[RMDB]
An RNA of 207 nucleotides, treated with 2A3 and read out base by base. The RNA was probed in 150 mM KOAc, 10 mM MgCl2 and 150 mM bicine (pH 8.5) at 24 C.
RNA sequence: GGGAACGACUCGAGUAGAGUCGAAAAACUACACUGGUAUUUGUAACUCUUUCAUUUCAAUUAUAUAGCCUCAUUUCCUAUUGGUAAAAAUUAAGUCCAGGAUUGCCUUGUGUGUGGAUAAGAAACACUAAGACACACUGGCAUAUACUUAAGUAGACUCUGCAUCAGUUUUCGAACUGAUGCAGAGAAAAGAAACAACAACAACAAC
Reactivity to 2A3 in 0.01 (KOAc 150mM, MgCl2 10mM, bicine 150mM(pH8.5), 24C), signal-to-noise 2, nucleotides 027 to 156: a000c010u080a010c030a050c040u050g000g000u190a120u070u090u110g130u100a070a020c020u070c000u130u170u070c030a050u140u170u080c060a020a070u150u090a200u090a020u160a230g110c000c060u080c020a050u100u130u050c050c020u100a110u150u050g050g020u120a050a050a010a050a000u080u060a020a000g010u020c060c000a020g120g000a060u000u060g010c020c020u110u090g010u000g000u010g000u000g110g120a000u050a160a070g130a160a110a070c070a000c160u070a020a010g070a010c010a000c000a000c020u000g010g020c050a020u010a000u000a010c000u050u110a000a100g110u210a160g010a020